Source information
The record gives the reactivity of an RNA of 177 nucleotides to 2A3 and DMS. The RNA was probed in 150 mM KOAc, 10 mM MgCl2 and 150 mM bicine (pH 8.5) at 24 C. DMS adducts were read by reverse transcription with MarathonRT. The DMS profile rests on 1,541 reads. For 2A3, 911 sequencing reads were counted.
RNA sequence: GGGAACGACUCGAGUAGAGUCGAAAAGCGAAAAUUUGUAUUCCAACCAGGUGCGCACAUGGCCAUCCUCAUCGAGCACGAGAUCAAGACACUCGGCCAGCUGCGGCCGAUUCUGCGCGGCUUCCGAAUACGAUGAGGGAUUCGUCCCUCAUCGUAUAAAAGAAACAACAACAACAAC
Reactivity to 2A3 in 0.01 (KOAc 150mM, MgCl2 10mM, bicine 150mM(pH8.5), 24C), signal-to-noise 1, nucleotides 027 to 126: g110c050g080a040a000a050a100u180u160u180g040u050a140u090u000c050c010a010a010c040c020a070g060g130u040g020c050g000c000a050c010a150u130g090g000c020c000a050u040c000c030u080c010a130u080c060g070a050g020c070a050c190g030a040g010a060u060c120a070a010g080a110c030a020c100u010c000g000g000c010c000a130g000c080u100g050c080g030g000c000c000g020a040u070u020c030u060g050c000g000c020g020g040c010u080u040c030c010g080a040
Reactivity to DMS in 0.01 (KOAc 150mM, MgCl2 10mM, bicine 150mM(pH8.5), 24C), signal-to-noise 2, nucleotides 027 to 126: g010c090g010a080a050a060a110u000u000u010g010u000a160u000u000c010c030a080a160c140c100a110g000g010u000g020c050g030c070a070c130a080u010g010g000c030c040a090u000c050c000u000c100a060u010c060g020a080g040c040a050c060g000a080g010a100u000c090a050a120g020a080c160a050c080u000c000g000g010c000c030a090g010c110u000g000c140g010g000c020c010g010a040u000u000c070u000g000c030g000c040g000g000c040u000u000c040c040g010a130